[RMDB]
RNA sequence: GGGAACGACUCGAGUAGAGUCGAAAAUCGAGUUCGCUCGACCUGUGACCUUUGUGCGUUGGGAGGAUCAUUCAAGUCACCAGGACCCAUUGGGUCCUGCAAGUCUUGAGUGAUCCAUCGAUCAACGCACUCUGGUAUUAAGUCUGUUCGCAGACAAUGUUGUUGAAGAAUUCGUUCUUCAACAACAAAAAGAAACAACAACAACAAC
Reactivity to 2A3 in 0.01 (KOAc 150mM, MgCl2 10mM, bicine 150mM(pH8.5), 24C), signal-to-noise 5, nucleotides 027 to 156: u070c000g000a000g040u110u090c200g060c090u020c010g070a090c000c030u140g120u180g170a030c000c000u000u040u010g000u000g010c010g000u010u000g020g010g020a050g000g000a000u000c000a000u010u000c000a000a000g010u000c000a010c140c000a030g000g000a000c000c000c050a080u210u300g000g000g000u010c020c000u000g010c010a090a220g000u010c000u000u000g000a000g000u000g000a000u000c000c000a000u010c000g000a020u030c000a000a000c000g000c000a000c010u000c000u000g000g000u010a100u060u260a090a020g000u000c000u010g040u080u140c270g030c130a030g010a030c030a070a060
Reactivity to DMS in 0.01 (KOAc 150mM, MgCl2 10mM, bicine 150mM(pH8.5), 24C), signal-to-noise 2, nucleotides 027 to 156: u000c010g000a060g020u000u000c150g050c020u000c000g010a110c040c030u000g020u000g010a050c010c000u000u000u000g010u010g020c000g000u000u000g010g010g020a100g040g010a010u020c000a000u000u000c000a000a020g010u000c020a300c130c010a010g010g010a020c000c000c020a300u000u010g040g060g040u000c000c000u010g010c030a040a110g000u000c000u000u000g020a040g030u000g010a010u000c000c010a010u000c140g000a140u000c000a010a020c010g010c000a000c010u000c030u010g000g010u000a090u010u000a110a160g020u000c000u010g000u000u000c180g050c020a050g020a030c040a120a260